[RMDB]
RNA sequence: GGGAACGACUCGAGUAGAGUCGAAAAUAUACAUUAGAUGUCGGCACAACUCCCGACUCGCGGUGAGCGAUACAGCGUAGCGCGAGGAUCGCAGCUGCUGUGCGGACGGCUAGCAAAAGUUAGCCAAACUCCCGACCAUGUUCGCAUGGUCGGGAGUAAAAGAAACAACAACAACAAC
Reactivity to 2A3 in 0.01 (KOAc 150mM, MgCl2 10mM, bicine 150mM(pH8.5), 24C), signal-to-noise 1, nucleotides 027 to 126: u170a000u000a020c300a080u000u300a190g040a260u300g000u000c060g020g000c000a000c000a000a090c090u090c000c000c130g000a000c000u000c040g000c000g000g240u020g000a050g000c000g120a110u160a300c250a050g000c030g140u240a000g220c000g000c000g000a070g020g000a000u000c010g130c010a000g010c070u160g000c050u000g000u080g100c020g030g000a070c090g000g000c030u010a000g030c000a220a220a000a000g000u000u000a000g000c000c010a000a000
This 177-nucleotide RNA was probed chemically with 2A3. Values cover nucleotides 27 to 126. For 2A3 the reverse transcriptase was SuperScript II with manganese. Conditions: 150 mM KOAc, 10 mM MgCl2 and 150 mM bicine (pH 8.5), 24 C. It was measured as part of the RMDB library OK1LIB.